[RMDB]
RNA sequence: GGGAACGACUCGAGUAGAGUCGAAAAGAUAUGGAUAUCGUACGGCCAACAGCUAGCUCGGAAACGAGCUAGACAUGGCUCGUACCGAUAUCCUAAGUCAAAACCACGAACCUUCGGGUUCGUGGAACCAGUUGUAUGUCUUCGGACAUACAACUGGAAAAGAAACAACAACAACAAC
Reactivity to DMS in 0.01 (KOAc 150mM, MgCl2 10mM, bicine 150mM(pH8.5), 24C), signal-to-noise 2, nucleotides 027 to 126: g020a050u010a300u000g000g000a010u000a010u000c000g010u000a000c000g010g010c000c030a030a140c300a250g000c000u000a000g050c000u000c000g010g010a150a120a230c010g010a010g000c000u000a000g000a010c080a270u010g000g000c010u000c010g010u000a000c130c110g020a010u000a010u000c000c010u000a010a030g000u000c020a080a070a060a160c000c000a000c000g000a000a000c000c000u000u000c230g020g000g030u000u000c030g000u000g000g000a020a110
Reactivity to 2A3 in 0.01 (KOAc 150mM, MgCl2 10mM, bicine 150mM(pH8.5), 24C), signal-to-noise 2, nucleotides 027 to 126: g030a020u070a040u210g000g000a010u000a000u000c030g000u000a010c020g020g020c020c020a060a020c090a200g060c000u010a000g000c010u030c010g000g040a070a120a100c010g010a000g050c020u000a010g010a010c000a040u070g030g000c030u070c120g000u030a000c000c000g030a010u010a000u010c000c000u000a110a000g050u030c050a010a000a080a200c000c000a020c020g000a000a000c010c000u110u150c300g260g000g000u000u020c000g010u010g000g000a010a040
An RNA of 177 nucleotides, treated with DMS and 2A3 and read out base by base. Source: RMDB library TTRDES, as collected in RNAgym. The 2A3 profile rests on 4,216 reads. The DMS profile rests on 1,505 reads.